[RMDB]
RNA sequence: GGGAACGACUCGAGUAGAGUCGAAAACUGCGUCCUGGUAAAAUUCUGGAUCUUUGGAAUCUGGCGGGGCUCCCCAGCCACAGCACCCUGCGAACAUUUAUUCAUUAUAACGGGGGAGAGAAAGAGAGAGCUGCUGAGAUAGGUGGUGCUGGCCUCGGGUCAAUAUUUAGUUCGCUAAAUAUUGACCAAAAGAAACAACAACAACAAC
Reactivity to 2A3 in 0.01 (KOAc 150mM, MgCl2 10mM, bicine 150mM(pH8.5), 24C), signal-to-noise 1, nucleotides 027 to 156: c020u050g010c040g050u010c010c000u010g050g070u090a010a110a210a120u120u030c020u020g140g000a070u020c040u150u120u080g070g000a170a060u050c020u020g140g000c120g000g020g100g000c020u050c000c040c000c010a020g050c010c000a040c040a020g070c070a020c020c020c000u020g040c040g040a050a030c000a000u030u060u210a170u140u300c010a010u110u300a070u040a110a020c060g050g020g000g020g000a020g010a000g020a010a160a000g040a000g000a000g020a000g000c040u020g050c010u020g000a040g040a120u060a000g000g010u060g000g000u010g000c060u000g030g000c020c020u070c090g020
Background
Chemical mapping of a 207-nucleotide RNA with 2A3. For 2A3, 369 sequencing reads were counted. Values cover nucleotides 27 to 156. The RNA was probed in 150 mM KOAc, 10 mM MgCl2 and 150 mM bicine (pH 8.5) at 24 C. It was measured as part of the RMDB library OK3TST.